[RMDB]
RNA sequence: GGGAACGACUCGAGUAGAGUCGAAAAGAUAUGGAUUAGGACAUGAGUGGAGGUCGGAAACGACCUAGAGCUCAACAGCCUACGGUCCUAAGUCGGAGAAUCUAAAGCGUUCGCGCUUUAGAUUCAACUGUUGAUCGUGUUUCGACACGAUCAACAGAAAAGAAACAACAACAACAAC
Reactivity to DMS in 0.01 (KOAc 150mM, MgCl2 10mM, bicine 150mM(pH8.5), 24C), signal-to-noise 2, nucleotides 027 to 126: g000a070u010a190u020g010g020a060u000u000a030g000g000a000c030a240u010g000a040g020u000g000g010a110g010g000u000c000g010g020a150a070a240c010g010a000c010c000u000a010g010a150g000c000u020c010a040a180c180a130g000c030c000u000a060c300g040g010u000c010c020u000a010a050g000u000c040g010g030a150g000a000a010u000c000u000a000a000a000g040c000g000u000u040c240g040c020g000c000u000u000u000a000g000a000u000u000c000a110a150
Reactivity to 2A3 in 0.01 (KOAc 150mM, MgCl2 10mM, bicine 150mM(pH8.5), 24C), signal-to-noise 1, nucleotides 027 to 126: g060a020u190a030u190g040g040a090u010u050a060g010g010a040c100a240u110g010a020g050u170g010g300a000g000g000u010c010g030g020a070a070a040c030g000a000c000c020u010a040g010a010g000c010u000c030a020a070c080a010g070c020c010u050a090c190g090g000u000c010c010u020a100a000g110u020c090g170g160a160g030a080a000u090c020u000a010a000a000g000c010g030u050u220c300g020c000g010c050u000u000u030a000g010a000u000u000c000a010a000

The record gives the reactivity of an RNA of 177 nucleotides to DMS and 2A3.
Conditions: 150 mM KOAc, 10 mM MgCl2 and 150 mM bicine (pH 8.5), 24 C.
For DMS the reverse transcriptase was MarathonRT.
The data come from the RNA Mapping Database (RMDB), library TTRDEL.
Values cover nucleotides 27 to 126.